The record gives the reactivity of an RNA of 177 nucleotides to 2A3 and DMS. For 2A3 the reverse transcriptase was SuperScript II with manganese. The RNA was probed in 150 mM KOAc, 10 mM MgCl2 and 150 mM bicine (pH 8.5) at 24 C. DMS adducts were read by reverse transcription with MarathonRT. It was measured as part of the RMDB library M2PK50. Reactivities are given for positions 27 through 126.
RNA sequence: GGGAACGACUCGAGUAGAGUCGAAAAAGUUUAGAUUUCGAUCUAAACUAGACCACUUAGAGGAUGACGAGUGACUACGACGCAUCUAGUAGAAUGCGCCCAGCUGUGAGCAGUUCGCUGCUCACAAGGUAACUUUUAAGUUCGCUUAAAAGUUACCAAAAGAAACAACAACAACAAC
Reactivity to 2A3 in 0.01 (KOAc 150mM, MgCl2 10mM, bicine 150mM(pH8.5), 24C), signal-to-noise 9, nucleotides 027 to 126: a000g010u010u000u000a010g000a020u050u050u120c250g050a010u000c010u000a000a010a000c000u000a010g030a040c020c020a020c040u030u100a050g010a040g200g030a090u080g050a050c050g020a010g040u060g050a060c040u060a040c140g090a020c020g000c020a010u000c030u030a040g020u010a030g060a210a040u040g010c010g010c010c010c000a030g030c080u060g000u000g010a000g000c000a000g010u020u080c190g010c080u000g000c000u000c000a000c000a000a000
Reactivity to DMS in 0.01 (KOAc 150mM, MgCl2 10mM, bicine 150mM(pH8.5), 24C), signal-to-noise 9, nucleotides 027 to 126: a040g010u000u000u000a000g000a020u000u000u020c160g010a030u000c000u000a010a000a010c000u000a060g000a170c030c010a090c110u000u000a090g010a090g000g000a070u000g000a090c080g000a100g010u000g010a100c080u000a070c100g010a100c060g000c020a020u000c020u010a120g000u000a080g000a070a040u000g000c050g000c010c010c090a110g020c160u000g010u000g000a010g010c000a010g010u000u010c220g020c000u000g010c000u000c000a000c010a010a030